[RMDB]
RNA sequence: GGGAACGACUCGAGUAGAGUCGAAAAAAUCGUACUCGAUGGAAUCGAAAGUUACAGCGCUUGGAAAUUAGCGCCUGGGUUGUCGAACCAGCUUAUCGCGCUGAUAAGCUUGAAGGAUACGCCGCUCCACCCACUAUGGGUUCGCCCAUAGUGGGUGAAAAGAAACAACAACAACAAC
Reactivity to DMS in 0.01 (KOAc 150mM, MgCl2 10mM, bicine 150mM(pH8.5), 24C), signal-to-noise 3, nucleotides 027 to 126: a070a060u010c020g030u010a020c040u000c030g020a130u010g030g010a100a140u010c020g020a020a080a060g000u000u000a080c110a210g010c020g000c000u000u000g000g030a090a120a190u000u000a020g010c000g020c050c080u000g000g000g000u000u000g000u000c010g000a090a170c090c030a020g000c000u010u000a000u000c010g010c260g010c210u010g000a000u000a000a030g000c000u000u000g000a100a080g000g000a080u000a030c050g000c080c050g000c040u000c070
Reactivity to 2A3 in 0.01 (KOAc 150mM, MgCl2 10mM, bicine 150mM(pH8.5), 24C), signal-to-noise 1, nucleotides 027 to 126: a000a000u070c030g030u060a060c050u000c030g020a060u080g090g000a160a090u040c010g020a070a010a030g040u040u050a140c000a000g000c000g010c040u040u090g050g080a100a300a300u130u040a050g000c000g030c000c040u060g090g010g030u070u030g090u060c040g010a060a020c080c000a000g000c000u000u000a000u000c030g070c090g000c190u060g000a000u010a020a000g040c000u030u080g020a060a040g040g010a020u020a050c040g030c070c020g080c000u020c020
The data come from the RNA Mapping Database (RMDB), library OK2TRN. This 177-nucleotide RNA was probed chemically with DMS and 2A3. The DMS profile rests on 2,224 reads. For DMS the reverse transcriptase was MarathonRT. The RNA was probed in 150 mM KOAc, 10 mM MgCl2 and 150 mM bicine (pH 8.5) at 24 C.